The record gives the reactivity of an RNA of 177 nucleotides to 2A3 and DMS. It was measured as part of the RMDB library TTRDES. For DMS the reverse transcriptase was MarathonRT. For 2A3 the reverse transcriptase was SuperScript II with manganese. The DMS profile rests on 9,087 reads.

RNA sequence: GGGAACGACUCGAGUAGAGUCGAAAAGAUAUGGACGGCCAUACAGCGAUGAAAUGUAUCGGAAACGAUACAUGGAGCUGGUGGUCCGUCCUAAGUCAAAACGCCAGAGUGUUCGCACUCUGGCGAACUAUUAACAUGGCUUCGGCCAUGUUAAUAGAAAAGAAACAACAACAACAAC
Reactivity to 2A3 in 0.01 (KOAc 150mM, MgCl2 10mM, bicine 150mM(pH8.5), 24C), signal-to-noise 6, nucleotides 027 to 126: g030a020u050a030u120g000g000a010c010g090g020c020c010a050u300a300c030a300g000c010g300a300u050g000a030a020a000u000g000u000a010u000c000g030g000a090a060a030c020g000a000u000a000c000a010u010g020g000a010g010c010u000g000g000u010g010g010u040c020c020g000u000c000c000u000a000a000g000u000c010a010a020a090a160c030g000c000c000a000g000a000g030u080g040u110u290c300g050c150a000c000u010c000u000g000g000c000g010a000a000
Reactivity to DMS in 0.01 (KOAc 150mM, MgCl2 10mM, bicine 150mM(pH8.5), 24C), signal-to-noise 5, nucleotides 027 to 126: g000a040u000a300u010g000g010a010c010g020g000c020c010a020u000a190c050a020g020c000g000a100u020g000a110a160a010u000g000u000a000u000c000g010g000a120a120a160c000g000a010u000a000c000a000u000g010g000a040g010c000u000g000g030u000g010g000u020c020c020g010u000c000c010u000a000a070g000u000c040a080a060a140a200c020g020c000c000a010g010a020g030u000g010u000u020c260g020c010a010c000u000c000u000g000g000c000g000a010a040